RNA sequence: GGGAACGACUCGAGUAGAGUCGAAAAAUGGAACGGGUGUUUUGUCAAAUCAAUACACACACCAGUUAUGGCUCUGAACCUUUGGUGGAGAAGGAGCUGUAAAGGGCUACCUGAAGCGACUGGCAUGACCCUCCUCGGUAUUCGUACCGAGGAGGGUAAAAGAAACAACAACAACAAC
Reactivity to 2A3 in 0.01 (KOAc 150mM, MgCl2 10mM, bicine 150mM(pH8.5), 24C), signal-to-noise 1, nucleotides 027 to 126: a000u100g000g020a110a090c050g000g050g060u040g020u030u040u060u030g020u050c030a000a080a120u150c010a010a060u110a110c070a000c010a000c000a000c020c000a000g000u000u000a000u010g020g000c000u000c020u100g050a020a030c000c050u060u160u300g300g130u200g000g050a060g000a040a040g000g000a000g000c020u010g000u010a020a020a020g000g020g030c010u020a060c050c020u050g030a060a000g050c020g070a050c060u000g030g110c010a090u070g040
Reactivity to DMS in 0.01 (KOAc 150mM, MgCl2 10mM, bicine 150mM(pH8.5), 24C), signal-to-noise 2, nucleotides 027 to 126: a130u020g000g000a060a090c140g000g040g030u000g010u010u000u020u000g030u040c090a080a200a140u010c020a010a080u000a020c030a020c090a100c090a110c050c030a030g020u000u000a040u000g000g000c000u000c000u000g000a220a210c060c000u000u000u010g000g000u030g010g010a140g010a140a240g000g000a010g000c000u000g000u010a000a080a080g020g000g040c070u010a070c010c030u000g000a140a130g060c170g000a110c110u010g010g050c080a030u010g000

Structure probing data (2A3 and DMS) for a 177-nucleotide construct. For 2A3, 763 sequencing reads were counted. Conditions: 150 mM KOAc, 10 mM MgCl2 and 150 mM bicine (pH 8.5), 24 C. It was measured as part of the RMDB library OK2TRN.